[RMDB]
About this RNA:
Structure probing data (2A3 and DMS) for a 177-nucleotide construct. For DMS, 24,238 sequencing reads were counted. The reactions ran in a buffer of 150 mM KOAc, 10 mM MgCl2 and 150 mM bicine (pH 8.5), at 24 C. For 2A3 the reverse transcriptase was SuperScript II with manganese. Reactivities are given for positions 27 through 126.
RNA sequence: GGGAACGACUCGAGUAGAGUCGAAAAGAUCAAUUAUGAUUGCAAUGUAAUAUGUCAAGGCAGACAUAUCUAGCUGUCGCCUUAGCUAGAGAUCGCCGAUUUAUUGCUUUCAUAAGACCGGCAAGAACAUACCUAAUGCAUUCGUGCAUUAGGUAUGAAAAGAAACAACAACAACAAC
Reactivity to 2A3 in 0.01 (KOAc 150mM, MgCl2 10mM, bicine 150mM(pH8.5), 24C), signal-to-noise 9, nucleotides 027 to 126: g060a110u150c060a020a100u050u010a000u020g010a000u010u010g000c000a010a010u040g050u220a060a050u100a080u250g200u130c080a080a090g040g000c060a060g030a060c030a060u160a060u020c000u010a000g000c000u010g100u180c080g160c050c040u080u080a000g000c000u000a000g000a010g000a090u050c030g000c010c010g010a010u030u040u010a010u000u020g000c000u010u010u010c000a010u010a010a020g030a040c020c020g050g040c070a080a030g050a140a020
Reactivity to DMS in 0.01 (KOAc 150mM, MgCl2 10mM, bicine 150mM(pH8.5), 24C), signal-to-noise 9, nucleotides 027 to 126: g010a110u010c110a100a150u000u000a000u000g010a010u000u000g000c010a010a010u000g000u000a040a050u000a070u010g010u010c210a100a140g010g010c030a080g030a040c300a080u000a300u000c010u000a010g010c010u000g010u010c170g010c210c130u000u000a010g010c000u000a010g010a040g010a070u000c060g000c010c010g000a050u000u000u000a020u000u000g000c010u000u000u000c010a010u000a010a020g000a140c030c020g010g000c160a080a090g010a100a200